Source: RMDB library M2PK90, as collected in RNAgym. The record gives the reactivity of an RNA of 177 nucleotides to DMS. For DMS the reverse transcriptase was MarathonRT. The reactions ran in a buffer of 150 mM KOAc, 10 mM MgCl2 and 150 mM bicine (pH 8.5), at 24 C.

RNA sequence: GGGAACGACUCGAGUAGAGUCGAAAAAAUUUAGAUUAUCCAGGUGUAGCGGUGAAAUUCGUAGAGAUCUGGUGGAUAAUGAACCGGUGGCGAAGGCGAAAGUUAACCGCUGAAAUGCUGAAGUGAAUAACAUGGGAACUUUCGAGUUCCCAUGUUAAAAAGAAACAACAACAACAAC
Reactivity to DMS in 0.01 (KOAc 150mM, MgCl2 10mM, bicine 150mM(pH8.5), 24C), signal-to-noise 1, nucleotides 027 to 126: a060a020u020u020u020a140g020a120u010u000a030u010c050c020a100g020g010u000g030u010a050g050c010g010g010u010g020a100a160a070u000u010c000g060u000a190g010a160g010a070u000c000u000g010g010u000g020g000a080u010a120a060u010g000a130a010c000c000g030g000u000g000g010c300g000a130a130g000g000c000g000a020a010a060g010u000u020a140a050c040c030g020c010u000g010a060a040a050u000g020c080u010g060a130a130g000u000g000a090a130